RNA sequence: GGGAACGACUCGAGUAGAGUCGAAAAUAAAUUAAAAAAGCUGAGAUGAGCUCAGCAAGGGUAUUUUUCGAUGGCGAAAGCCUCGUUCCCUAUCCCUUGCUCCGGAAACGGUAGCUUUUACACAUAAAGAUUAACCCUUAUUCGUAAGGGUUAAUCUAAAAGAAACAACAACAACAAC
Reactivity to DMS in 0.01 (KOAc 150mM, MgCl2 10mM, bicine 150mM(pH8.5), 24C), signal-to-noise 2, nucleotides 027 to 126: u010a010a030a070u010u000a000a020a050a020a050a150g020c010u010g020a020g000a300u000g020a260g050c010u000c010a010g020c000a030a020g000g000g010u000a100u000u000u000u010u000c000g000a040u010g010g020c010g010a100a050a160g010c010c000u010c000g030u000u000c000c000c010u000a250u000c000c000c000u000u000g000c010u000c000c000g010g000a080a080a090c010g020g010u000a000g000c010u000u020u000u000a100c220a070c260a090u010a080a100
Reactivity to 2A3 in 0.01 (KOAc 150mM, MgCl2 10mM, bicine 150mM(pH8.5), 24C), signal-to-noise 1, nucleotides 027 to 126: u020a000a000a020u150u120a070a070a020a090a000a030g030c020u010g020a000g000a170u250g070a060g180c020u000c000a000g000c000a000a000g000g000g000u020a010u030u000u010u000u010c020g000a000u070g000g010c020g050a110a020a020g030c000c010u000c000g000u000u000c000c000c000u000a030u130c040c000c000u000u000g000c000u000c000c000g040g030a100a070a030c010g010g060u060a050g020c000u070u090u130u140a040c110a000c010a040u240a130a220